Overview
An RNA of 177 nucleotides, treated with 2A3 and DMS and read out base by base. The RNA was probed in 150 mM KOAc, 10 mM MgCl2 and 150 mM bicine (pH 8.5) at 24 C. For 2A3 the reverse transcriptase was SuperScript II with manganese. For DMS the reverse transcriptase was MarathonRT. For 2A3, 3,231 sequencing reads were counted. Values cover nucleotides 27 to 126. It was measured as part of the RMDB library TTRINS.

[RMDB]
RNA sequence: GGGAACGACUCGAGUAGAGUCGAAAAGAUAUGGACUAACAUGGAGCAUUACGCGCUUCUUGGAUUUAGCGUCGGAAACGACGCUUGUCAGAAGCCCCCAAUGCUAUGAAGUGUUAGUCCUAAGUCAGUGUUUAUCAAUGUUCGCAUUGAUAAACACAAAAGAAACAACAACAACAAC
Reactivity to 2A3 in 0.01 (KOAc 150mM, MgCl2 10mM, bicine 150mM(pH8.5), 24C), signal-to-noise 2, nucleotides 027 to 126: g040a030u110a060u260g000g000a000c000u020a000a010c000a030u030g100g020a020g000c020a020u010u060a070c200g140c010g030c030u020u000c020u050u270g260g000a060u300u300u210a000g000c000g010u020c010g020g020a120a070a030c000g010a000c000g000c010u020u020g000u020c000a000g000a000a010g000c010c030c000c000c110a000a020u010g030c020u170a300u300g030a020a040g040u020g010u000u000a010g000u010c000c000u000a020a020g060u020c070a050
Reactivity to DMS in 0.01 (KOAc 150mM, MgCl2 10mM, bicine 150mM(pH8.5), 24C), signal-to-noise 2, nucleotides 027 to 126: g000a050u010a300u010g000g000a010c010u000a000a000c000a000u010g010g000a000g000c010a020u000u000a060c230g020c300g030c010u000u000c010u000u000g030g000a010u000u000u000a010g060c000g000u000c000g000g000a120a090a200c000g020a010c000g010c000u000u000g020u000c000a030g000a000a000g010c000c020c180c270c140a050a020u000g030c000u010a250u020g020a160a260g020u030g000u000u000a000g010u000c000c000u000a010a120g010u000c020a090